[RMDB]
RNA sequence: GGGAACGACUCGAGUAGAGUCGAAAAGUCUUUAAGUGUACUUUUACCUGCUGUAUUCAUAGUCAUGAGCAAAGGUACAGAAGAUAUUUGAGUAUUAAGUAUGCUUUGAAAGUAUCUCUUAUAUUGCUGAUCUUAUGUCGGUGUUACCAAAAAAAAACGAGCAUAUACUUUUCGAAGUAUAUGCUCGAAAAGAAACAACAACAACAAC
Reactivity to 2A3 in 0.01 (KOAc 150mM, MgCl2 10mM, bicine 150mM(pH8.5), 24C), signal-to-noise 5, nucleotides 027 to 156: g030u030c020u000u060u020a040a040g010u020g010u040a010c000u010u040u010u010a030c010c000u020g020c020u040g020u050a040u040u230c040a070u090a160g110u060c040a150u180g050a060g070c060a060a050a070g020g000u010a010c010a010g070a100a010g050a100u110a080u190u150u120g070a050g010u020a020u130u040a040a000g000u010a000u020g010c000u060u090u160g100a080a040a010g010u030a180u010c010u000c030u070u080a110u060a060u180u250g000c030u010g020a080u070c040u120u210a110u270g030u030c020g050g000u060g050u110u140a090c000c000a080a020a000a150a000a060a180a010a020
Reactivity to DMS in 0.01 (KOAc 150mM, MgCl2 10mM, bicine 150mM(pH8.5), 24C), signal-to-noise 1, nucleotides 027 to 156: g000u000c030u000u000u000a060a050g010u010g000u000a050c030u010u000u010u000a020c040c010u030g000c030u020g010u020a090u000u000c130a130u000a200g020u010c120a080u010g020a180g030c000a090a130a130g010g000u000a020c000a060g010a060a020g020a040u000a020u000u000u010g010a130g040u000a090u000u000a040a050g030u010a030u000g000c000u020u000u000g030a110a130a110g000u000a030u000c030u010c000u000u010a080u000a120u000u000g020c020u000g020a160u010c040u010u000a020u010g030u010c010g010g010u020g000u000u000a140c050c040a000a010a000a030a090a020a050a090a240
Structure probing data (2A3 and DMS) for a 207-nucleotide construct. The RNA was probed in 150 mM KOAc, 10 mM MgCl2 and 150 mM bicine (pH 8.5) at 24 C. 2A3 adducts were read by reverse transcription with SuperScript II with manganese.